[RMDB]
RNA sequence: GGGAACGACUCGAGUAGAGUCGAAAAGUCCUGCCAUGAGACCGCAACGAGAGCAUGUCGCAUCGAAUGGACUCGGGGAGUCGGCAGCUUGCCCCACGGAUGAGCGCCUAAUGCCGGCAUUCGGUAAAAUAGACUGGAUAGUUCGCUAUCCAGUCAAGAAUCUUUGAAAGUUCGCUUUCAAAGAUUCAAAAGAAACAACAACAACAAC
Reactivity to DMS in 0.01 (KOAc 150mM, MgCl2 10mM, bicine 150mM(pH8.5), 24C), signal-to-noise 1, nucleotides 027 to 156: g000u000c020c010u010g000c030c070a070u000g010a120g030a030c000c110g000c040a110a230c040g000a160g000a300g000c040a070u010g000u000c010g050c040a080u010c080g040a140a250u010g040g010a070c040u010c070g000g010g040g010a100g020u000c030g030g000c020a070g030c020u000u010g000c030c000c010c040a210c080g010g020a110u000g000a060g030c050g000c020c080u010a020a070u000g020c060c020g010g020c030a170u000u000c020g000g000u000a030a050a050a160u000a100g010a030c000u010g000g000a040u010a000g040u020u010c250g040c020u000a010u010c000c000a000g010u000c000a000a030
Reactivity to 2A3 in 0.01 (KOAc 150mM, MgCl2 10mM, bicine 150mM(pH8.5), 24C), signal-to-noise 3, nucleotides 027 to 156: g020u030c000c020u010g040c010c000a080u080g050a030g010a120c030c060g030c080a090a120c090g040a030g000a000g110c070a100u130g090u160c050g010c030a060u030c030g040a040a040u050g000g050a040c040u040c070g020g000g000g010a080g040u040c030g010g020c000a040g000c040u090u130g030c000c000c000c010a030c060g020g040a130u060g000a010g070c020g070c030c040u110a140a050u110g020c020c020g000g030c030a020u090u070c010g010g040u060a000a030a060a050u070a040g000a000c000u000g000g000a010u000a000g020u070u080c040g000c110u000a000u000c000c000a010g000u000c000a000a000